RNA sequence: GGGAACGACUCGAGUAGAGUCGAAAAAGUAUCGAGCCGAUCGCUUGAUACAAAUGCCAGCUAUGUGGCAAAGUGUCAUAGUCAUAGGGAUACAAACUAUGAAAGUAUCCAAGACUCAUAGGAGUCAGCAUUGUUGUACGUUCGCGUACAACAAUGCAAAAGAAACAACAACAACAAC
Reactivity to DMS in 0.01 (KOAc 150mM, MgCl2 10mM, bicine 150mM(pH8.5), 24C), signal-to-noise 1, nucleotides 027 to 126: a090g000u000a000u000c000g010a000g020c000c300g000a040u040c210g020c000u000u000g000a000u010a000c010a050a040a070u020g000c000c000a040g010c080u000a000u000g000u000g000g040c010a180a070a020g010u020g010u100c000a010u000a000g010u000c170a200u120a100g030g000g000a020u020a030c030a020a170a140c190u000a100u020g000a070a200a040g000u020a000u000c000c020a120a020g000a000c000u000c000a150u030a120g040g010a000g020u000c000a250
Reactivity to 2A3 in 0.01 (KOAc 150mM, MgCl2 10mM, bicine 150mM(pH8.5), 24C), signal-to-noise 2, nucleotides 027 to 126: a010g030u030a000u000c000g000a020g000c030c070g170a200u120c050g000c000u000u000g000a000u000a010c000a000a050a000u040g020c000c000a020g030c020u030a000u050g000u030g000g000c000a010a260a050g070u060g160u230c020a010u000a000g000u000c000a040u070a030g030g020g030a000u000a000c010a020a080a000c020u080a110u200g140a000a070a050g020u020a000u000c000c000a000a000g020a000c000u000c070a090u240a200g290g000a000g000u020c010a000